[RMDB]
RNA sequence: GGGAACGACUCGAGUAGAGUCGAAAAGAUAUGGAUGUAACGAUCGAUAAGCCAUACGUCGGAAACGACGUGAUGGCUUUUGACGAUUUGUUACAUCCUAAGUCAAACCCCUCUGUUCGCAGAGGGGCGUCGUGUACGAGUUCGCUCGUACACGACGAAAAGAAACAACAACAACAAC
Reactivity to 2A3 in 0.01 (KOAc 150mM, MgCl2 10mM, bicine 150mM(pH8.5), 24C), signal-to-noise 2, nucleotides 027 to 126: g010a000u030a060u200g010g010a000u020g000u000a000a000c010g000a020u020c010g010a040u010a150a010g040c020c020a040u010a010c000g000u010c000g000g050a140a080a080c000g030a010c000g010u080g070a060u010g000g000c030u000u000u030u000g010a000c000g010a000u090u150u300g020u000u000a000c000a000u000c000c000u000a010a010g000u010c050a080a060a240c020c010c030c000u000c000u020g080u040u140c300g000c180a010g000a010g010g010g000g090
Reactivity to DMS in 0.01 (KOAc 150mM, MgCl2 10mM, bicine 150mM(pH8.5), 24C), signal-to-noise 2, nucleotides 027 to 126: g000a030u010a300u010g000g010a010u000g020u000a000a010c000g000a000u000c000g010a100u020a000a050g030c000c000a000u000a050c000g010u000c000g010g010a120a120a150c000g000a000c000g020u000g020a000u010g000g000c000u000u000u000u020g010a180c160g000a000u010u000u020g010u000u000a020c000a010u000c000c000u000a020a070g000u010c020a160a090a260c020c000c000c010u020c000u000g000u010u020c250g040c010a000g010a010g000g000g000g000
About this RNA:
The record gives the reactivity of an RNA of 177 nucleotides to 2A3 and DMS. Reactivities are rounded to 0.1 and cut off at 0 and 3. For 2A3 the reverse transcriptase was SuperScript II with manganese. It was measured as part of the RMDB library TTRDES.